[RMDB]
RNA sequence: GGGAACGACUCGAGUAGAGUCGAAAACAAUGCAGGUUAAGCCAAAGGGAUGUGCCGACCGGAGGCCGACAAUCCAGGGAACCGGAUGUCAUCACGUUGUUGCAGUACCAGAUGGCAUCUUAAAUCCAAAAGAACACAUAGUUCGCUAUGUGUUCAACCGUAUUACGAUGUUCGCAUCGUAAUACGGAAAAGAAACAACAACAACAAC
Reactivity to 2A3 in 0.01 (KOAc 150mM, MgCl2 10mM, bicine 150mM(pH8.5), 24C), signal-to-noise 3, nucleotides 027 to 156: c060a010a180u210g050c080a060g050g080u150u130a110a010g080c020c050a100a040a050g090g020g020a080u080g110u080g060c010c030g040a040c020c070g040g000a020g020g010c000c000g010a010c040a020a040u040c010c040a040g000g010g010a030a030c000c060g030g000a000u000g020u010c000a000u000c010a020c170g020u010u020g030u000u040g000c050a070g050u110a070c060c000a010g000a000u010g000g000c000a010u000c000u000u040a020a020a000u020c010c000a020a000a010a130g000a000a000c000a000c000a000u010a000g020u010u050c080g030c070u000a000u000g010u010g000u000u000c000a000a000
Reactivity to DMS in 0.01 (KOAc 150mM, MgCl2 10mM, bicine 150mM(pH8.5), 24C), signal-to-noise 2, nucleotides 027 to 156: c100a070a190u010g030c060a090g040g000u000u010a090a130g000c020c050a070a180a230g020g010g000a080u000g000u010g040c030c020g000a060c020c040g030g010a300g020g010c010c000g010a060c040a080a130u000c040c030a120g010g020g010a060a090c060c050g020g000a030u000g030u020c000a070u020c000a210c200g040u000u010g010u000u000g010c010a100g030u020a090c020c110a210g000a030u010g000g000c000a000u010c010u020u010a060a040a100u020c040c030a020a090a070a200g010a020a020c000a000c010a010u010a000g010u000u010c300g030c000u000a010u000g010u000g050u010u000c000a030a080